[RMDB]
RNA sequence: GGGAACGACUCGAGUAGAGUCGAAAACAUCUUUCCUCCCUACACAGUGACUCCAGCUUGGGAGGGGCAGGGCUAGGCCGAGCCAGCACUCCCUGUGGUGUCUGCCUGCCACGUGCAGCUCUGGAGUAAAACCUGGAGAAGUUCGCUUCUCCAGGAACAUAAAAUAUUGGUUCGCCAAUAUUUUAUGAAAAGAAACAACAACAACAAC
Reactivity to 2A3 in 0.01 (KOAc 150mM, MgCl2 10mM, bicine 150mM(pH8.5), 24C), signal-to-noise 4, nucleotides 027 to 156: c020a080u090c100u080u110u070c000c010u040c000c010c010u150a090c130a020c030a160g120u060g110a030c010u000c010c010a010g030c050u060u060g000g000g010a000g010g010g010g000c020a020g010g000g030c030u270a030g010g000c000c020g020a010g030c000c010a050g070c030a030c050u110c010c020c010u050g020u030g020g030u060g180u030c010u010g010c010c000u010g020c000c010a140c100g180u100g010c000a030g010c010u020c030u090g000g000a000g000u010a000a050a000a030c000c000u000g000g000a000g000a000a010g010u070u170c210g020c110u000u000c000u000c000c000a000g000g000a000a000
Reactivity to DMS in 0.01 (KOAc 150mM, MgCl2 10mM, bicine 150mM(pH8.5), 24C), signal-to-noise 2, nucleotides 027 to 156: c070a090u010c110u000u000u000c020c010u010c000c020c000u000a210c100a200c150a150g020u000g000a080c010u010c010c020a110g010c080u000u010g010g020g000a030g010g010g010g040c000a040g030g020g040c010u000a080g040g010c040c060g010a230g010c000c020a140g000c030a060c020u010c040c030c040u000g030u010g020g010u000g020u000c030u000g000c050c010u000g010c020c010a060c060g010u000g020c060a090g010c080u000c030u000g000g000a090g040u000a060a050a080a150c000c010u000g000g010a030g020a020a030g020u010u010c300g010c020u000u010c000u000c000c000a000g000g010a010a050
Source: RMDB library M2RFOK, as collected in RNAgym. Chemical mapping of a 207-nucleotide RNA with 2A3 and DMS. DMS adducts were read by reverse transcription with MarathonRT. The RNA was probed in 150 mM KOAc, 10 mM MgCl2 and 150 mM bicine (pH 8.5) at 24 C. Values cover nucleotides 27 to 156.